This 207-nucleotide RNA was probed chemically with 2A3 and DMS. DMS adducts were read by reverse transcription with MarathonRT. 2A3 adducts were read by reverse transcription with SuperScript II with manganese. Reactivities are given for positions 27 through 156.
RNA sequence: GGGAACGACUCGAGUAGAGUCGAAAACUGCAUCACCUGAUCACUGAUGGCUCAACGGUAUCCGGCGGUACAACUGAAUACUUGUAGCCGCCUUUUGAGCGGGUUGGCUGCAAUCCGAAACGGAGAGAAAACCUAAUUACGUUCGCGUAAUUAGGAAGAAUUACUACUAGUUCGCUAGUAGUAAUUCAAAAGAAACAACAACAACAAC
Reactivity to 2A3 in 0.01 (KOAc 150mM, MgCl2 10mM, bicine 150mM(pH8.5), 24C), signal-to-noise 9, nucleotides 027 to 156: c020u040g000c010a030u030c010a030c010c010u040g040a050u050c030a010c060u050g020a040u050g080g000c020u020c050a060a060c050g090g010u070a080u070c040c020g030g010c040g030g060u100a070c050a080a020c090u180g080a140a070u120a170c050u030u040g000u010a010g070c000c000g000c000c000u030u020u020u040g020a020g010c050g000g020g000u110u230g020g000c010u020g010c020a020a030u010c020c010g050a120a130a100c120g020g010a030g000a010g020a050a090a020a030c000c000u000a000a000u000u000a000c010g020u020u050c200g000c000g110u000a000a000u000u000a000g000g000a010a000
Reactivity to DMS in 0.01 (KOAc 150mM, MgCl2 10mM, bicine 150mM(pH8.5), 24C), signal-to-noise 4, nucleotides 027 to 156: c060u000g020c040a120u000c020a060c010c010u000g010a070u000c050a060c080u000g010a070u000g010g030c020u000c020a090a060c040g000g020u000a060u000c030c030g010g020c020g030g020u000a080c110a100a070c040u000g010a070a050u000a040c040u000u000g010u000a040g010c020c010g010c010c000u000u000u010u010g020a100g020c030g020g010g000u000u000g030g000c060u000g000c010a070a110u000c040c010g010a060a100a140c060g000g000a100g000a290g000a110a060a100a100c000c010u010a010a010u010u000a010c010g030u010u000c300g040c010g030u000a000a020u010u010a010g010g010a030a020